[RMDB]
RNA sequence: GGGAACGACUCGAGUAGAGUCGAAAAGAUAUGGAUUGCGAUGAAAGGUCGGCGUGUAGUCCGGUAACACGGUCGGAAACGACCGUGCCAGGACGCAGAUACGCCGACCUGGAGCAAUCCUAAGUCAGAUGCCUAUGUACUUCGGUACAUAGGCAUCAAAAGAAACAACAACAACAAC
Reactivity to DMS in 0.01 (KOAc 150mM, MgCl2 10mM, bicine 150mM(pH8.5), 24C), signal-to-noise 2, nucleotides 027 to 126: g000a070u010a300u020g020g000a010u000u010g010c010g020a070u000g000a180a140a010g010g020u030c000g010g060c000g000u000g030u010a160g000u000c000c010g000g000u000a100a280c020a040c000g000g020u000c000g010g000a130a150a230c020g040a030c000c000g050u000g030c030c050a230g000g010a010c010g020c250a110g010a050u010a010c020g000c030c000g000a000c010c000u000g020g030a070g020c020a020a010u000c000c000u000a010a050g000u000c090a140

Structure probing data (DMS) for a 177-nucleotide construct. The data come from the RNA Mapping Database (RMDB), library TTRINS. For DMS the reverse transcriptase was MarathonRT. The DMS profile rests on 1,315 reads. The reactions ran in a buffer of 150 mM KOAc, 10 mM MgCl2 and 150 mM bicine (pH 8.5), at 24 C.